RNA sequence: GGGAACGACUCGAGUAGAGUCGAAAAGUGCUUGAGCACUGAGAGUUCGCUCGUCGUUGAUGCGAUCCGGAAAGCAUUUGCGACUCUUGAUGUCGAUCCGGAAAGACAUCUGUGCUCUUGCACGAAAGGGACUUGCGUGCUUCGGCAUGCGAGUCCCAAAAGAAACAACAACAACAAC
Reactivity to 2A3 in 0.01 (KOAc 150mM, MgCl2 10mM, bicine 150mM(pH8.5), 24C), signal-to-noise 9, nucleotides 027 to 126: g000u000g000c000u010u010g000a000g010c000a010c040u060g020a030g000a010g060u160u130c050g010c040u030c020g150u050c040g070u080u230g030a030u060g000c010g030a090u030c010c010g020g030a060a040a020g020c020a050u030u040u170g020c010g030a030c010u010c000u030u120g030a020u020g020u040c010g020a060u040c010c010g000g000a050a050a000g010a000c000a020u000c020u040g000u000g000c000u000c000u010u010g000c000a000c000g000a040a000a000
Reactivity to DMS in 0.01 (KOAc 150mM, MgCl2 10mM, bicine 150mM(pH8.5), 24C), signal-to-noise 5, nucleotides 027 to 126: g010u000g000c000u000u000g000a020g000c000a010c000u030g000a030g010a080g000u010u020c050g010c020u010c130g010u010c140g010u050u040g000a030u010g000c000g000a230u020c020c020g030g000a120a090a270g000c030a020u010u010u020g000c020g010a040c010u000c040u020u010g000a030u010g000u020c000g000a160u030c040c020g010g000a070a130a230g000a030c030a050u000c010u030g010u010g010c000u000c010u000u000g000c010a000c000g010a040a050a090